[RMDB]
RNA sequence: GGGAACGACUCGAGUAGAGUCGAAAACUCGGUUAAUUCGUUAACCGAGACUUCUUAAACAUCUUUUCAACACAUAGAUGGUAAAUAUUCAAAGAAGUUCGAAUGCGAUAAACUUCGGUUUAUCGAACGGUUAAUAUGGUUUCGACCAUAUUAACCGAAAAGAAACAACAACAACAAC
Reactivity to 2A3 in 0.01 (KOAc 150mM, MgCl2 10mM, bicine 150mM(pH8.5), 24C), signal-to-noise 5, nucleotides 027 to 126: c000u000c000g000g020u030u010a050a020u060u070c130g020u030u010a010a000c000c000g010a010g000a000c000u020u030c010u010u060a120a130a040c010a040u020c010u090u070u120u130c200a200a080c060a030c020a140u100a060g020a020u010g020g000u020a020a140a060u210a110u120u100c030a060a040a000g010a020a000g020u040u060c050g070a120a070u150g080c020g010a000u000a000a000a000c010u040u050c160g070g010u000u010u010a010u000c000g010a070a020
Reactivity to DMS in 0.01 (KOAc 150mM, MgCl2 10mM, bicine 150mM(pH8.5), 24C), signal-to-noise 4, nucleotides 027 to 126: c000u000c000g000g010u000u000a000a040u010u010c170g030u000u000a000a010c000c000g000a010g000a050c020u000u000c000u000u000a060a100a130c000a020u000c000u010u000u000u000c110a130a090c300a080c260a040u010a030g020a040u000g000g010u000a040a050a100u000a090u010u000c100a100a040a060g000a020a020g000u000u000c090g020a080a100u010g010c000g000a010u000a010a000a010c000u000u000c230g020g000u000u000u000a000u000c010g000a040a090